RNA sequence: GGGAACGACUCGAGUAGAGUCGAAAAGUCUCUCGGUCUGACAGGGCAGGAGGAAUUCGAUAUUGACCUCAAGGGAGGUGACAUCGCCCCCGGUACAGUUCUCACAGUCACGACAAAGUGCGGCAAGCAUCGGCUGGAGAUUCGUCUCCAGCCGAUGAAAAGAAACAACAACAACAAC
Reactivity to 2A3 in 0.01 (KOAc 150mM, MgCl2 10mM, bicine 150mM(pH8.5), 24C), signal-to-noise 1, nucleotides 027 to 126: g030u020c010u000c010u030c090g020g020u030c030u060g010a070c030a180g020g020g000c000a000g000g080a010g000g070a030a050u000u060c020g000a000u040a160u090u090g080a020c000c020u000c040a080a100g120g040g030a130g060g000u010g030a080c050a080u100c050g020c000c000c000c000c000g000g000u040a060c020a050g000u030u000c040u020c000a020c030a020g070u100c010a030c050g140a040c070a030a120a000g030u120g040c030g000g000c030a100a000g060
Reactivity to DMS in 0.01 (KOAc 150mM, MgCl2 10mM, bicine 150mM(pH8.5), 24C), signal-to-noise 2, nucleotides 027 to 126: g010u000c000u000c000u000c080g020g000u000c010u020g030a120c180a080g000g000g000c040a080g030g000a110g000g000a070a060u010u010c040g010a080u000a100u000u000g000a060c040c000u040c010a150a110g020g020g000a030g000g010u000g000a110c130a060u010c080g000c010c000c000c030c040g010g030u010a140c120a110g000u000u010c020u000c010a100c180a040g010u000c040a040c080g000a020c150a070a080a140g000u000g020c100g010g030c060a160a080g020